An RNA of 177 nucleotides, treated with 2A3 and DMS and read out base by base. The DMS profile rests on 1,331 reads. Reactivities are given for positions 27 through 126. The data come from the RNA Mapping Database (RMDB), library OK2TRN.
RNA sequence: GGGAACGACUCGAGUAGAGUCGAAAAUCUAGAGCGAGGAUCUCUAGUACUCGAUCCAUGCGUACUACGUACUCUGUGUACUGCUCGUACAGAGUACCAGCAGCCAUGAGUACUCAUGGGUACUGAGGUCACCACCCGUUUUCGAACGGGUGGUGACAAAAGAAACAACAACAACAAC
Reactivity to 2A3 in 0.01 (KOAc 150mM, MgCl2 10mM, bicine 150mM(pH8.5), 24C), signal-to-noise 1, nucleotides 027 to 126: u000c000u000a000g000a000g050c100g060a150g190g080a220u020c000u000c010u000a020g020u050a080c020u010c010g030a030u070c010c000a000u010g040c000g040u030a010c010u020a010c030g000u000a010c000u010c010u030g070u010g000u090a060c030u030g050c020u020c010g010u040a010c020a010g070a000g010u000a010c000c010a050g150c030a000g040c050c000a110u230g060a000g020u000a000c010u000c000a000u000g010g000g060u040a080c120u130g020a020g000
Reactivity to DMS in 0.01 (KOAc 150mM, MgCl2 10mM, bicine 150mM(pH8.5), 24C), signal-to-noise 1, nucleotides 027 to 126: u010c060u000a070g020a020g010c060g020a120g020g020a120u010c000u000c010u000a040g010u010a180c020u010c080g010a030u030c010c010a010u000g020c160g020u000a020c020u000a110c090g000u010a000c000u000c010u000g000u020g010u000a110c000u010g010c060u000c060g010u020a030c020a010g000a010g000u000a010c010c080a120g020c150a130g000c170c090a010u000g000a030g000u000a030c030u000c000a030u010g000g010g000u000a030c060u010g010a000g040

The reactions ran in a buffer of 150 mM KOAc, 10 mM MgCl2 and 150 mM bicine (pH 8.5), at 24 C.